[RMDB]
RNA sequence: GGGAACGACUCGAGUAGAGUCGAAAAUGCACUCUUUCUUCUCGAAUACCAGGCGGAGAAGUUUCCUUUCCGGUAUAUACGAGUCUUCGGCAUGUGGACCCGAGGUUUCUCCGACACUUGUCUCCGAGUCCUGGAUAUGAUUCGUCAUAUCCAGGACAAAAGAAACAACAACAACAAC
Reactivity to 2A3 in 0.01 (KOAc 150mM, MgCl2 10mM, bicine 150mM(pH8.5), 24C), signal-to-noise 2, nucleotides 027 to 126: u060g040c020a020c080u050c000u020u090u030c020u110u020c010u000c010g010a040a010u030a110c000c000a030g080g000c060g090g000a020g020a110a100g010u030u090u050c030c000u080u080u050c010c030g050g080u050a100u000a020u020a130c050g020a030g060u000c000u040u050c040g010g020c040a030u110g030u030g060g040a040c000c010c000g010a040g020g010u040u060u040c010u000c010c000g040a030c000a000c040u050u030g040u000c000u000c040c010g010a010
Reactivity to DMS in 0.01 (KOAc 150mM, MgCl2 10mM, bicine 150mM(pH8.5), 24C), signal-to-noise 3, nucleotides 027 to 126: u000g000c070a110c070u000c050u000u000u000c040u010u010c010u000c010g020a150a080u000a080c040c040a120g020g010c300g020g010a010g000a060a080g010u010u000u010c020c020u000u010u000c050c040g020g010u000a040u010a070u000a120c060g000a030g010u000c050u000u010c060g000g020c040a100u010g010u000g000g010a100c080c020c030g010a060g020g000u000u010u010c030u000c010c020g010a100c170a060c100u000u000g010u000c030u020c010c020g000a300
The record gives the reactivity of an RNA of 177 nucleotides to 2A3 and DMS. For DMS the reverse transcriptase was MarathonRT. Conditions: 150 mM KOAc, 10 mM MgCl2 and 150 mM bicine (pH 8.5), 24 C. The DMS profile rests on 2,952 reads. Values cover nucleotides 27 to 126. For 2A3, 2,264 sequencing reads were counted. The data come from the RNA Mapping Database (RMDB), library OK2TST.